[RMDB]
RNA sequence: GGGAACGACUCGAGUAGAGUCGAAAACACUGGCGAGGCGAUGACCCUGGCGGUGCUGCAGCCGGUUCUGGACAAGGCGACUGCCAACGGCACGUUCACCUACGGCAAGGAAAUCAGCGCCGUCCAGGAGGGCUUUAUGGUUCGCCAUAAAGCCCUCAAAAGAAACAACAACAACAAC
Reactivity to DMS in 0.01 (KOAc 150mM, MgCl2 10mM, bicine 150mM(pH8.5), 24C), signal-to-noise 1, nucleotides 027 to 126: c070a070c100u000g020g040c070g000a010g010g020c020g010a120u010g000a220c050c010c000u020g000g010c050g010g010u000g000c000u050g000c260a160g000c050c000g010g000u000u000c130u000g110g010a170c170a060a100g020g000c050g000a080c020u000g000c010c020a120a210c260g000g000c020a020c300g000u010u000c010a030c030c040u010a140c060g000g040c020a160a140g010g000a050a090a080u010c020a000g000c030g000c010c000g020u010c020c010a000g000
Reactivity to 2A3 in 0.01 (KOAc 150mM, MgCl2 10mM, bicine 150mM(pH8.5), 24C), signal-to-noise 1, nucleotides 027 to 126: c020a000c070u040g040g010c040g030a050g060g000c060g280a300u030g040a060c000c000c000u010g000g000c000g000g060u000g010c000u050g000c020a020g040c000c020g040g000u250u120c090u110g000g030a020c020a120a030g000g020c000g010a060c030u050g000c020c000a160a090c040g010g000c030a010c070g020u100u000c010a050c030c000u000a090c020g010g000c040a090a190g100g100a130a100a060u120c000a010g000c000g000c000c020g060u060c000c040a000g050